[RMDB]
RNA sequence: GGGAACGACUCGAGUAGAGUCGAAAAGAAUAGGCGAAACUCUCUCGACGCCGAAAGCUACGAAAAAUCUCAGAAAAUGAGAUGAACGUGUGUACGAAGAGAGAGAUGCACACGGAAAAGUAGCGAAGGGUACAAACAAGUUCGCUUGUUUGUACCCAAAAGAAACAACAACAACAAC
Reactivity to 2A3 in 0.01 (KOAc 150mM, MgCl2 10mM, bicine 150mM(pH8.5), 24C), signal-to-noise 3, nucleotides 027 to 126: g040a070a060u090a040g010g000c000g000a050a140a020c010u000c000u010c020u020c070g050a040c000g010c000c000g020a040a040a000g020c000u000a000c010g040a130a000a010a000a010u000c000u010c000a020g100a070a280a040a090u040g000a010g000a000u000g000a030a010c000g000u010g000u000g000u020a030c050g090a140a040g030a020g010a000g000a000g000a020u080g000c000a010c000a000c000g010g020a030a060a010a000g000u010a000g000c000g000a060a020
Reactivity to DMS in 0.01 (KOAc 150mM, MgCl2 10mM, bicine 150mM(pH8.5), 24C), signal-to-noise 3, nucleotides 027 to 126: g010a130a060u000a040g020g000c000g010a090a040a090c080u000c010u010c010u000c020g010a300c020g020c010c010g020a050a020a140g030c010u000a000c000g020a050a040a020a100a010u000c010u000c010a020g000a040a080a150a040u000g000a000g000a010u000g000a070a080c000g000u000g020u000g040u000a040c120g000a160a150g000a060g000a040g000a030g010a040u010g000c000a000c000a000c010g000g000a040a090a090a130g010u000a000g000c000g000a100a120